Structure probing data (2A3 and DMS) for a 177-nucleotide construct. For 2A3, 35,628 sequencing reads were counted.
[RMDB]
RNA sequence: GGGAACGACUCGAGUAGAGUCGAAAAGCCGAAGAGUUCGCUCUUCGGCGACGAAUUUGGCGUAGAUGAGAGUCUACAGUACUAGCCAUCCCAGAUGUACUAAUAAGCAUUGCUUCGGCAAUGCUAACUAAUAACUUAGUUUCGACUAAGUUAUUAGAAAAGAAACAACAACAACAAC
Reactivity to 2A3 in 0.01 (KOAc 150mM, MgCl2 10mM, bicine 150mM(pH8.5), 24C), signal-to-noise 9, nucleotides 027 to 126: g000c010c000g000a000a000g020a000g050u120u190c220g020c110u000c000u000u000c000g000g080c000g000a000c010g100a050a190u140u090u170g010g000c040g010u020a010g010a030u030g060a020g010a020g070u000c010u010a020c030a040g010u010a020c030u030a020g000c000c010a050u020c000c000c000a020g030a110u120g010u030a030c020u040a060a180u110a220a010g000c000a010u000u010g000c000u030u110c240g060g000c000a000a000u000g000c000u000a000a000
Reactivity to DMS in 0.01 (KOAc 150mM, MgCl2 10mM, bicine 150mM(pH8.5), 24C), signal-to-noise 9, nucleotides 027 to 126: g010c000c000g010a010a000g010a030g020u000u010c220g020c000u000c010u000u000c000g010g010c000g000a030c160g010a120a140u000u010u000g010g000c020g010u000a010g010a020u000g010a240g000a230g000u000c000u000a020c090a070g010u000a010c030u000a230g000c010c010a070u000c000c000c000a140g000a090u000g010u000a010c030u010a110a100u010a100a040g010c000a010u000u000g000c000u000u010c170g010g010c010a010a000u000g000c000u000a010a090

Background: The RNA was probed in 150 mM KOAc, 10 mM MgCl2 and 150 mM bicine (pH 8.5) at 24 C.